[RMDB]
RNA sequence: GGGAACGACUCGAGUAGAGUCGAAAAGAGCCCCUGCUAUUUCCUGUUGCUGUCAUGGAAGAGGGAGGAACACACCCACUAAAUUAGUGUGUUGAAACUAUGAGGGCUUGUUCCAGAUGUGCUCAGGAUAACCAUACGUCUUCGGACGUAUGGUUAUAAAAGAAACAACAACAACAAC
Reactivity to DMS in 0.01 (KOAc 150mM, MgCl2 10mM, bicine 150mM(pH8.5), 24C), signal-to-noise 3, nucleotides 027 to 126: g000a160g010c060c020c010c070u000g020c100u000a100u010u010u000c010c010u000g000u010u010g010c030u010g010u000c070a070u010g020g010a060a040g000a090g000g010g000a120g010g010a030a030c010a020c060a040c000c090c110a150c160u010a070a100a120u000u000a040g010u000g010u000g020u000u000g010a120a110a110c050u010a050u000g000a180g000g010g020c060u000u000g000u010u010c000c010a100g010a070u000g010u010g000c010u000c020a100g000g000
Reactivity to 2A3 in 0.01 (KOAc 150mM, MgCl2 10mM, bicine 150mM(pH8.5), 24C), signal-to-noise 1, nucleotides 027 to 126: g070a000g140c000c010c070c040u020g040c060u100a200u100u080u070c000c020u000g100u250u170g130c040u100g090u120c030a150u170g030g000a010a040g040a030g030g010g030a120g050g030a040a000c000a010c020a020c030c070c010a020c070u000a130a200a160u250u100a020g000u000g000u000g040u050u090g060a090a060a000c060u060a060u260g070a210g090g030g150c090u000u030g000u040u000c020c020a040g030a160u110g020u050g020c020u010c030a020g100g000